Structure probing data (DMS and 2A3) for a 177-nucleotide construct. The reactions ran in a buffer of 150 mM KOAc, 10 mM MgCl2 and 150 mM bicine (pH 8.5), at 24 C.
[RMDB]
RNA sequence: GGGAACGACUCGAGUAGAGUCGAAAAACGCCACGCUGCUGCGCGCCGACGAGAUCGCCUGGCUGGAUGACUACCACCGCACCGUGCGCGAGCGCCUGGCGCCGUGGGUCGAGGGCGCCGCGCUGCACCGUACUCCUAUAUUCGUAUAGGAGUACGGAAAAGAAACAACAACAACAAC
Reactivity to DMS in 0.01 (KOAc 150mM, MgCl2 10mM, bicine 150mM(pH8.5), 24C), signal-to-noise 6, nucleotides 027 to 126: a100c100g020c010c020a080c080g010c070u000g010c050u010g000c080g020c060g020c040c020g010a090c070g010a090g010a100u010c060g020c030c050u000g010g020c050u010g010g000a090u010g010a100c090u000a120c030c020a070c060c050g020c060a070c080c080g000u000g000c000g010c030g010a120g010c000g010c010c030u010g020g020c080g020c030c040g010u000g010g020g030u000c030g020a300g000g000g000c000g000c000c030g000c010g010c010u000g010c130a160
Reactivity to 2A3 in 0.01 (KOAc 150mM, MgCl2 10mM, bicine 150mM(pH8.5), 24C), signal-to-noise 5, nucleotides 027 to 126: a010c060g030c010c000a040c050g040c010u090g010c010u060g000c040g010c020g010c060c020g060a080c030g030a030g030a140u070c030g030c020c030u040g050g010c030u030g040g030a090u080g050a040c040u070a060c020c030a030c030c030g030c030a040c030c050g090u070g010c010g010c010g050a110g000c010g010c000c030u070g110g010c020g010c010c020g150u170g060g040g040u110c110g220a100g000g030g000c010g000c020c000g000c000g000c010u030g000c020a030